[RMDB]
RNA sequence: GGGAACGACUCGAGUAGAGUCGAAAAGCAGUCCUACCUGCAGGUCUUUGCCGGAUCCAAGAGUGCGACCAGCGUAGCAGAGGCAGGAACAAGGACUGACCUGGAGGACGGGAAGCUAUGGCAGCUGAUCCAGUACUUUUUUCGAAAAGUACUGGAUAAAAGAAACAACAACAACAAC
Reactivity to 2A3 in 0.01 (KOAc 150mM, MgCl2 10mM, bicine 150mM(pH8.5), 24C), signal-to-noise 7, nucleotides 027 to 126: g020c010a010g080u020c010c000u000a050c000c000u040g080c010a030g030g070u010c010u040u050u110g110c020c010g030g040a120u010c010c010a080a040g130a050g240u110g030c060g020a070c020c040a050g060c050g090u110a020g000c090a020g030a110g190g000c040a030g020g020a040a050c110a080a040g000g010a010c000u000g030a010c000c000u040g020g070a020g020g030a120c070g010g000g010a040a020g010c030u060a070u120g110g020c020a030g010c030u070g030
Reactivity to DMS in 0.01 (KOAc 150mM, MgCl2 10mM, bicine 150mM(pH8.5), 24C), signal-to-noise 9, nucleotides 027 to 126: g010c040a080g010u000c010c010u000a150c010c000u010g000c010a080g010g010u000c010u000u000u000g020c010c020g010g000a160u000c020c020a110a200g010a150g010u000g020c060g000a080c040c050a100g010c090g010u000a070g020c040a070g000a120g000g010c060a080g010g010a070a050c160a280a110g000g000a050c020u000g010a050c020c010u000g010g000a060g000g000a090c130g000g000g010a100a050g000c060u000a070u010g010g010c090a090g000c080u010g000